The record gives the reactivity of an RNA of 207 nucleotides to DMS and 2A3. The reactions ran in a buffer of 150 mM KOAc, 10 mM MgCl2 and 150 mM bicine (pH 8.5), at 24 C. The DMS profile rests on 2,708 reads. It was measured as part of the RMDB library OK3TST.
RNA sequence: GGGAACGACUCGAGUAGAGUCGAAAAAUACUGGAAUACCUAUGUUAGUCCUUAAAUGCAUGCCUACCUGCCUGCAAUAACUAACUUACAAAGUAUUUGGUUAGCAACAAGCAACUAAAAGCAAUUGUUAUAAACUUUUCCUUCCAAACUCUAGGUACGACUAUUAGUAGUUCGCUACUAAUAGUCGAAAAGAAACAACAACAACAAC
Reactivity to DMS in 0.01 (KOAc 150mM, MgCl2 10mM, bicine 150mM(pH8.5), 24C), signal-to-noise 2, nucleotides 027 to 156: a080u000a050c020u000g000g010a080a090u000a080c020c010u020a130u000g010u000u000a120g010u000c040c070u010u000a070a110a090u020g000c030a060u000g010c010c010u010a120c170c060u000g010c010c020u000g060c000a110a100u000a050a030c000u000a030a030c010u000u000a290c100a090a050a110g050u010a030u000u010u000g010g020u000u000a040g040c000a080a050c050a030a050g030c010a040a080c020u000a060a060a090a100g010c030a120a150u000u000g000u000u000a160u000a090a010a100c020u000u000u000u000c030c010u000u000c060c060a060a070a090c090u000c030u000a070g020g010u000a160
Reactivity to 2A3 in 0.01 (KOAc 150mM, MgCl2 10mM, bicine 150mM(pH8.5), 24C), signal-to-noise 8, nucleotides 027 to 156: a000u030a020c020u030g040g040a080a050u050a120c010c010u050a070u140g010u000u030a020g040u100c050c030u100u100a080a140a020u090g000c010a000u020g000c000c030u080a140c040c050u070g010c010c010u010g000c010a030a070u040a090a010c010u010a010a020c000u030u060a050c040a050a090a010g010u020a040u020u010u020g020g000u020u040a020g050c020a020a080c020a100a040g030c010a020a070c080u220a100a110a070a020g020c020a060a160u050u030g030u080u080a110u080a110a100a050c020u060u040u030u040c000c000u060u070c030c010a110a120a130c070u090c080u210a030g050g010u210a040